Structure probing data (DMS and 2A3) for a 207-nucleotide construct. 2A3 adducts were read by reverse transcription with SuperScript II with manganese. Reactivities are rounded to 0.1 and cut off at 0 and 3. It was measured as part of the RMDB library OK3TST. DMS (dimethyl sulfate) methylates the pairing face of unpaired adenines and cytosines. Conditions: 150 mM KOAc, 10 mM MgCl2 and 150 mM bicine (pH 8.5), 24 C.

RNA sequence: GGGAACGACUCGAGUAGAGUCGAAAAUGUGAGAAGUGGUAUGGGAUGGAGGUGUUUGUUGCGACUUAGUGGCCUACACACUGUUCUUUUCCUGCUUCUUAAAAGAUGACGUAUGGUCAUGCUUUACUUUAUGAUGGGGGUACCUUCUCAGAAAUGAGAUUUAUAAAUACUUCGGUAUUUAUAAAUCAAAAGAAACAACAACAACAAC
Reactivity to DMS in 0.01 (KOAc 150mM, MgCl2 10mM, bicine 150mM(pH8.5), 24C), signal-to-noise 2, nucleotides 027 to 156: u000g030u010g010a050g000a060a070g020u000g010g000u000a070u010g020g020g030a080u000g020g030a130g040g050u000g010u000u000u000g020u010u000g020c030g020a210c140u010u010a100g020u000g020g000c060c040u040a040c020a090c020a080c070u020g010u000u000c020u000u000u000u000c080c050u010g020c030u000u000c020u000u010a050a060a050a070g030a080u000g010a020c020g020u000a120u010g040g010u000c020a050u000g020c050u000u000u000a060c080u000u010u000a080u020g010a080u000g000g020g020g030g030u000a030c020c020u000u000c030u000c010a100g000a070a070a110u010g000a290
Reactivity to 2A3 in 0.01 (KOAc 150mM, MgCl2 10mM, bicine 150mM(pH8.5), 24C), signal-to-noise 4, nucleotides 027 to 156: u150g030u030g020a010g000a020a010g020u010g040g010u040a040u040g020g000g000a010u020g010g090a140g120g000u020g020u030u070u000g010u030u020g010c030g210a080c130u080u100a040g010u010g060g010c000c010u040a000c010a000c000a000c010u010g020u030u030c000u030u260u030u030c000c010u020g030c010u030u000c000u010u050a050a070a000a040g030a010u020g010a000c030g100u220a100u290g140g000u050c020a020u040g090c010u100u090u040a120c030u090u160u070a150u260g070a070u070g010g030g010g000g000u020a060c000c000u050u020c040u010c020a030g050a040a100a020u110g000a050